[RMDB]
RNA sequence: GGGAACGACUCGAGUAGAGUCGAAAAACACCUAGUAUGGAGAAAAAUUUAACGGCAACUCGUUACGUUGCUCCUGGUCAAGAAACACAACAUUAUUACGGACUUCCUGUCGCUGAUUCAGCCAUUGCGAUGGUGAUUAGUUCGCUAAUCACCAUCGAAAAGAAACAACAACAACAAC
Reactivity to DMS in 0.01 (KOAc 150mM, MgCl2 10mM, bicine 150mM(pH8.5), 24C), signal-to-noise 4, nucleotides 027 to 126: a060c180a120c030c010u000a070g020u020a090u000g000g000a080g020a050a030a030a070a030u020u000u020a010a050c080g000g020c170a110a080c140u030c070g030u000u020a020c050g010u000u000g000c010u000c000c000u030g040g010u030c100a010a050g010a080a040a080c110a070c090a090a100c120a050u020u010a090u010u000a050c060g000g000a050c040u000u000c010c010u000g000u000c050g000c020u000g020a060u000u010c050a070g000c020c070a110u030u020g010
Reactivity to 2A3 in 0.01 (KOAc 150mM, MgCl2 10mM, bicine 150mM(pH8.5), 24C), signal-to-noise 8, nucleotides 027 to 126: a010c080a050c000c010u010a050g090u070a110u180g100g030a090g050a070a120a060a100a070u110u160u130a100a020c040g070g000c100a120a080c080u030c090g070u060u070a030c040g030u020u060g030c010u000c010c000u030g030g020u070c050a090a070g060a200a130a030c110a000c020a160a050c010a040u120u170a090u150u120a130c070g020g020a020c010u080u030c020c020u050g050u110c030g000c030u020g020a200u110u050c020a020g040c010c020a060u070u180g060
About this RNA
Structure probing data (DMS and 2A3) for a 177-nucleotide construct. Reactivities are given for positions 27 through 126. The 2A3 profile rests on 5,644 reads. It was measured as part of the RMDB library OK1LIB. DMS adducts were read by reverse transcription with MarathonRT.